[RMDB]
RNA sequence: GGGAACGACUCGAGUAGAGUCGAAAAGCUCUGCGAGACAGCUCGAACAACAAAGAGAGAUCGAAAAUCUUAGAGGAGAGAACGAAUCUGUCGACUUCACUAGGACAUUGUCGAUCAGAGGUCCAAAGACCAAUCAUGGGUUCGCCUAUGGUUGGUCAAAAGAAACAACAACAACAAC
Reactivity to DMS in 0.01 (KOAc 150mM, MgCl2 10mM, bicine 150mM(pH8.5), 24C), signal-to-noise 9, nucleotides 027 to 126: g010c010u000c000u010g010c020g000a190g010a050c070a080g000c050u000c010g010a070a130c150a110a100c280a070a110a120g010a130g010a090g000a040u010c030g000a080a060a120a210u010c010u000u000a020g000a060g000g000a020g000a100g000a140a030c030g010a090a090u040c150u030g000u000c000g010a050c000u000u000c010a100c010u000a000g000g000a020c150a090u020u010g020u010c020g000a110u010c010a050g000a050g010g000u010c010c020a050a070a090
Reactivity to 2A3 in 0.01 (KOAc 150mM, MgCl2 10mM, bicine 150mM(pH8.5), 24C), signal-to-noise 9, nucleotides 027 to 126: g020c000u000c000u010g010c020g010a020g020a020c030a020g020c000u000c000g060a080a040c050a060a020c030a020a290a000g090a010g000a000g010a030u050c020g040a030a030a020a050u000c010u010u020a010g010a030g030g010a010g000a010g030a070a030c020g030a070a130u120c100u160g090u040c030g060a130c000u010u000c010a010c030u020a010g000g020a010c020a130u070u120g050u020c000g000a010u020c010a000g010a010g020g030u010c010c000a040a050a010